[RMDB]
RNA sequence: GGGAACGACUCGAGUAGAGUCGAAAAGAUAUGGAAAGCGACGAUCUACCAUCACUUUGAUCUCGGAAACGAGGGAGUGAAUGGUAGGGAGCUUUCCUAAGUCAAAACCGUUACUUCGGUAACGGAAGUGCAUUAAUACGUUCGCGUAUUAAUGCACAAAAGAAACAACAACAACAAC
Reactivity to DMS in 0.01 (KOAc 150mM, MgCl2 10mM, bicine 150mM(pH8.5), 24C), signal-to-noise 4, nucleotides 027 to 126: g010a040u000a300u020g010g000a020a000a010g010c010g010a050c270g000a030u000c000u000a000c000c000a020u000c000a010c010u000u000u010g000a060u030c000u000c000g010g010a080a080a200c010g000a010g010g020g000a000g010u000g000a040a030u000g000g010u000a000g000g000g000a040g010c010u000u000u010c000c000u000a010a090g000u010c040a100a070a110a170c000c000g010u000u000a000c000u010u010c190g030g000u000a000a000c010g000g000a010a050
Reactivity to 2A3 in 0.01 (KOAc 150mM, MgCl2 10mM, bicine 150mM(pH8.5), 24C), signal-to-noise 6, nucleotides 027 to 126: g010a020u070a030u120g000g000a020a000a000g010c000g300a300c000g000a110u000c000u000a000c010c000a010u020c000a010c030u170u190u150g170a200u150c000u000c000g030g010a060a060a070c020g000a010g010g020g010a010g000u020g040a230a220u000g010g000u000a000g000g000g000a000g000c000u010u000u000c000c000u000a070a000g030u020c020a000a010a080a150c000c000g000u000u000a010c000u010u060c260g130g010u000a000a010c000g000g030a060a050